[RMDB]
Structure probing data (2A3 and DMS) for a 207-nucleotide construct.
2A3 adducts were read by reverse transcription with SuperScript II with manganese.
Reactivities are given for positions 27 through 156.
The data come from the RNA Mapping Database (RMDB), library OK3TST.
RNA sequence: GGGAACGACUCGAGUAGAGUCGAAAAACAGCCUGCCUGAUAAUUAUCUUGUAUGUUUGCAAUUUCUAAAACAUUCCCAUCUCUUGUCUCCUCUAGUUCUCAUGUGUGGUAGGCAGGGCAGGGAUCAUUAUCCCCAUCUUAUAGAUGAGGUUCAGAACCUAAAUUAGUGAUUCGUCACUAAUUUAGGAAAAGAAACAACAACAACAAC
Reactivity to 2A3 in 0.01 (KOAc 150mM, MgCl2 10mM, bicine 150mM(pH8.5), 24C), signal-to-noise 4, nucleotides 027 to 156: a010c020a010g040c000c020u030g020c020c010u080g090a140u080a250a090u180u150a130u090c070u050u060g030u090a170u070g060u060u100u090g050c080a150a160u050u110u110c070u190a040a030a050a100c040a090u040u060c010c020c000a090u030c040u000c030u040u080g020u030c010u020c010c020u030c040u060a080g090u200u060c070u060c090a080u170g090u030g000u020g100g050u080a010g000g000c020a000g010g000g000c040a020g000g000g010a020u050c030a050u050u240a060u110c000c000c000c000a000u000c010u060u180a170u120a210g000a030u010g030a050g040g000u030u050c050a050g040a110a080
Reactivity to DMS in 0.01 (KOAc 150mM, MgCl2 10mM, bicine 150mM(pH8.5), 24C), signal-to-noise 1, nucleotides 027 to 156: a040c020a150g000c000c000u010g030c060c030u020g020a140u000a090a110u010u000a080u000c040u000u010g020u000a030u010g010u000u010u020g050c030a100a160u010u010u010c030u000a090a050a040a100c040a160u000u010c010c010c000a160u000c050u000c050u010u000g010u000c030u000c010c040u000c080u000a090g020u000u000c050u000c050a130u010g000u030g000u010g040g000u010a030g030g010c040a080g000g010g000c070a070g000g000g020a050u000c050a050u000u010a120u000c000c010c010c000a020u000c010u000u010a180u000a120g020a010u000g020a020g000g040u000u000c090a110g000a100a210